The record gives the reactivity of an RNA of 207 nucleotides to 2A3. Conditions: 150 mM KOAc, 10 mM MgCl2 and 150 mM bicine (pH 8.5), 24 C. Reactivities are given for positions 27 through 156. The data come from the RNA Mapping Database (RMDB), library OK3TST.
[RMDB]
RNA sequence: GGGAACGACUCGAGUAGAGUCGAAAAGAUUCAAGAGAUUCUCCUGCCUCAGCCUGCCAAGUAGCUGGAAUUACAGGCGCCCACCAUGACGUCUCACUAAUUUUUGUAUUCAGUAGAGACAAGGUUUUGUCACAUUGGCCAGGCUAGUCUCGAACUCGAACACGAAAGGUUUCGACCUUUCGUGUUCAAAAGAAACAACAACAACAAC
Reactivity to 2A3 in 0.01 (KOAc 150mM, MgCl2 10mM, bicine 150mM(pH8.5), 24C), signal-to-noise 1, nucleotides 027 to 156: g060a030u240u180c120a090a080g020a030g030a000u090u000c050u040c060c000u090g010c030c000u080c040a000g000c000c000u020g020c010c000a030a040g020u040a050g130c060u080g030g010a070a070u100u080a070c040a150g010g020c000g050c120c080c020a110c000c000a170u230g170a120c070g040u000c000u000c000a010c000u000a020a040u000u050u110u190u150g140u170a150u040u160c070a020g020u020a080g000a000g010a090c000a000a000g040g000u020u200u140u090g070u000c050a100c050a200u030u040g030g090c200c030a000g000g000c000u020a090g000u000c040u000c000g060a040a010c120u160c230